[RMDB]
RNA sequence: GGGAACGACUCGAGUAGAGUCGAAAAGACGAGCAUAUCUUACGCCGGUUCGCUCCUGGCCAACUCUUACAUCGUGUAUACGAAGACUCAUCUGGAGAAAGCCAUGAGCUUAGAUAAGACUGCGAUGUGUGUAGACCGUAUUCGUACGGUCUACACAAAAAGAAACAACAACAACAAC
Reactivity to DMS in 0.01 (KOAc 150mM, MgCl2 10mM, bicine 150mM(pH8.5), 24C), signal-to-noise 3, nucleotides 027 to 126: g000a060c100g000a150g030c060a040u010a260u000c040u010u000a090c120g040c080c040g000g010u000u010c170g000c000u000c030c040u020g030g000c000c040a010a300c030u010c030u000u000a060c080a040u000c040g030u000g010u000a060u030a090c070g010a080a090g020a080c100u010c140a060u000c090u000g000g010a020g000a030a200a180g010c010c000a010u000g000a040g010c010u010u000a010g000a170u000a040a030g000a060c210u000g000c050g000a080u010g000
Reactivity to 2A3 in 0.01 (KOAc 150mM, MgCl2 10mM, bicine 150mM(pH8.5), 24C), signal-to-noise 2, nucleotides 027 to 126: g060a020c110g040a030g020c030a020u070a070u050c030u040u040a030c060g050c120c050g190g000u030u110c040g000c010u020c000c030u000g000g010c000c020a020a050c000u000c020u070u090a050c040a090u000c050g010u040g040u150a050u020a200c080g070a090a050g090a060c020u060c140a140u030c110u130g000g000a040g010a050a010a030g030c000c000a010u030g000a000g030c040u030u060a020g000a050u050a020a030g010a020c020u020g010c040g030a090u040g050